[RMDB]
An RNA of 207 nucleotides, treated with 2A3 and read out base by base. Reactivities are given for positions 27 through 156.

RNA sequence: GGGAACGACUCGAGUAGAGUCGAAAAACAUAUUACGAUAUGAUUCAGAUGGUGUCUUACUGGUUCGUACGAAGGGACAUAAUGGUUUCUUGUUUCCAACCAAAGAACAAGUGGCGAGCCUGAAUAAAAAACUGACUGCCGUUCGCGGCAGUCAGAAGAUGUGAGAGUUGUUCGCAACUCUCACAUCAAAAGAAACAACAACAACAAC
Reactivity to 2A3 in 0.01 (KOAc 150mM, MgCl2 10mM, bicine 150mM(pH8.5), 24C), signal-to-noise 2, nucleotides 027 to 156: a010c030a000u150a000u110u120a030c030g020a020u010a040u130g120a100u020u110c060a040g060a120u070g080g040u050g000u050c020u020u030a030c020u100g020g020u030u030c030g010u070a120c070g070a070a030g070g000g000a010c040a070u300a240a050u150g050g000u060u000u010c010u040u000g020u020u040u020c000c050a090a130c020c000a040a060a030g020a010a020c020a050a000g000u000g060g000c020g000a000g010c000c020u100g090a060a040u170a110a090a000a010a010a010c000u000g000a000c000u000g070c020c020g020u040u060c240g000c000g050g000c000a000g000u000c010a000g000a000a000